RNA sequence: GGGAACGACUCGAGUAGAGUCGAAAAUCAUUUAGGUUUAUUUUAUCUGGUUAAUGGAUUAUGCAGUUCCUUUGCUUCUUUACCACUUAUCUUUUGAGUUUUUGUCAAAGAUUUUAUCCCAAAAACCACUCGCCAUCAAAUUCGUUUGAUGGCGAGUAAAAGAAACAACAACAACAAC
Reactivity to 2A3 in 0.01 (KOAc 150mM, MgCl2 10mM, bicine 150mM(pH8.5), 24C), signal-to-noise 2, nucleotides 027 to 126: u070c020a020u010u010u140a060g000g020u030u200u000a120u110u210u000u020a030u050c020u070g080g000u060u050a160a010u170g090g000a010u140u130a100u140g020c000a020g040u040u030c000c000u000u090u090g000c000u020u010c000u000u060u060a100c070c040a040c070u020u070a060u110c010u010u070u140u070g100a100g140u080u080u010u280u200g100u000c000a000a020a000g020a020u000u000u000u200a090u050c070c000c000a000a110a000a000a000c010c020